[RMDB]
RNA sequence: GGGAACGACUCGAGUAGAGUCGAAAAUGAGAAUCAAACAACAAAUCAGUUUGAGAACAAGACGACACAGAGGAAUCAGCGGUGGCCCACUGUGCAGAAGGUAUAAAGUUUUGUGAGGCAUAAGACAGAUCUGUCUGCACGUUGAUUGAAGAAAUGCUAGUGUCAAUCGAUUCGUCGAUUGACACUAAAAAGAAACAACAACAACAAC
Reactivity to DMS in 0.01 (KOAc 150mM, MgCl2 10mM, bicine 150mM(pH8.5), 24C), signal-to-noise 2, nucleotides 027 to 156: u020g020a050g000a090a200u000c010a080a010a070c030a130a300c090a050a120a100u020c160a160g030u000u010u000g000a050g020a060a030c060a040a100g010a040c010g020a070c100a060c040a050g020a020g050g000a050a090u010c020a060g040c010g020g000u010g000g010c030c030c050a090c040u010g010u020g000c030a070g020a090a050g010g020u000a040u010a160a060a110g020u000u010u000u000g020u010g060a130g040g040c020a020u000a020a100g020a060c020a140g020a020u000c070u000g010u020c010u000g030c000a020c020g060u000u000g000a140u000u000g010a090a230g010a070a020a070u000g030c190
Reactivity to 2A3 in 0.01 (KOAc 150mM, MgCl2 10mM, bicine 150mM(pH8.5), 24C), signal-to-noise 2, nucleotides 027 to 156: u120g000a020g060a030a070u050c030a030a020a010c010a040a030c050a080a160a080u080c030a080g020u000u000u030g040a020g010a040a010c050a080a070g050a050c080g030a020c030a000c020a060g040a050g010g110a030a030u100c000a030g030c010g060g020u080g070g030c000c000c000a060c020u070g000u010g040c000a000g010a010a020g070g030u040a070u100a190a100a070g040u000u030u030u020g110u120g010a110g120g000c020a020u010a090a000g020a010c010a000g090a040u030c020u030g200u010c000u020g060c020a010c020g010u010u070g060a230u010u070g010a090a050g030a040a080a000u070g040c070